Overview: The record gives the reactivity of an RNA of 177 nucleotides to DMS and 2A3. It was measured as part of the RMDB libraries RFM100 and RFMREP. DMS adducts were read by reverse transcription with MarathonRT. The RNA was probed in 150 mM KOAc, 10 mM MgCl2 and 150 mM bicine (pH 8.5) at 24 C.
[RMDB]
RNA sequence: GGGAACGACUCGAGUAGAGUCGAAAACCAUGCUUCUCUAACGUUGCAUGGAGUCUAUGUCUGGACCUCCUCCAUUUGCUCUUUCAAGAGAAUGUGAGAAUUUCGAGAUUCGGACAUAGCCUUCAUGAGCUUGCAUAAAAUUCGUUUUAUGCAAGCUAAAAGAAACAACAACAACAAC
Reactivity to DMS in 0.01 (KOAc 150mM, MgCl2 10mM, bicine 150mM(pH8.5), 24C), signal-to-noise 6, nucleotides 027 to 126: c010c010a100u020g010c050u000u000c020u000c050u010a120a110c220g010u000u000g010c010a010u000g000g000a010g000u000c000u010a010u000g000u000c000u000g010g010a000c020c000u000c000c010u000c000c010a010u000u000u020g010c020u000c010u000u020u050c290a130a070g010a020g020a050a010u000g000u040g010a010g020a220a160u010u020u030c280g000a010g000a050u000u000c000g000g000a010c000a000u000a010g000c060c010u000u000c010a020u010g000
Reactivity to 2A3 in 0.01 (KOAc 150mM, MgCl2 10mM, bicine 150mM(pH8.5), 24C), signal-to-noise 9, nucleotides 027 to 126: c010c000a020u080g070c050u090u090c040u020c050u110a120a050c120g080u050u080g010c000a000u000g000g000a000g000u000c000u000a000u000g000u000c000u010g000g000a010c000c000u010c010c010u000c010c010a030u020u040u220g170c020u010c010u030u300u110c160a180a010g010a000g010a010a000u020g070u190g020a030g040a130a200u150u220u270c060g000a010g000a010u000u000c000g000g000a000c000a000u000a000g000c000c000u010u010c000a010u010g010